This 177-nucleotide RNA was probed chemically with DMS and 2A3. Reactivities are given for positions 27 through 126. For 2A3 the reverse transcriptase was SuperScript II with manganese. The reactions ran in a buffer of 150 mM KOAc, 10 mM MgCl2 and 150 mM bicine (pH 8.5), at 24 C. The DMS profile rests on 3,663 reads. Source: RMDB library M2PK90, as collected in RNAgym.

RNA sequence: GGGAACGACUCGAGUAGAGUCGAAAAAGAAAGGAUACCGAAAGGUAUCCAAUUUGCACAUUGGAUUGCGGUAACCUCUCACGAGUGACGUUGAAGUAACUAUGUGCAGUAAUACCGCAAGAAAAAACAUCUGAAAGAUCUUCGGAUCUUUCAGAUGAAAAGAAACAACAACAACAAC
Reactivity to DMS in 0.01 (KOAc 150mM, MgCl2 10mM, bicine 150mM(pH8.5), 24C), signal-to-noise 4, nucleotides 027 to 126: a070g000a090a070a260g010g000a010u000a010c000c010g000a090a090a170g010g010u000a000u000c000c000a010a040u010u000u010g020c110a060c140a160u010u000g000g010a260u000u000g010c000g000g010u000a040a070c200c090u000c040u010c030a020c020g020a090g010u010g000a030c040g010u010u000g010a080a140g000u000a060a020c020u000a080u000g010u010g010c230a020g000u000a020a080u010a020c010c000g010c030a040a060g000a000a010a030a060a080a130
Reactivity to 2A3 in 0.01 (KOAc 150mM, MgCl2 10mM, bicine 150mM(pH8.5), 24C), signal-to-noise 2, nucleotides 027 to 126: a000g060a020a050a020g010g010a000u000a010c000c000g000a060a040a000g000g000u000a000u000c000c000a010a010u000u000u050g020c020a030c030a070u020u100g090g050a080u040u030g020c010g000g000u020a040a040c020c010u000c010u000c010a020c050g060a030g060u080g030a030c040g040u040u150g180a200a040g010u030a010a010c000u010a040u230g000u010g000c000a010g010u020a010a050u020a020c000c020g000c030a010a000g100a070a050a000a000a000a010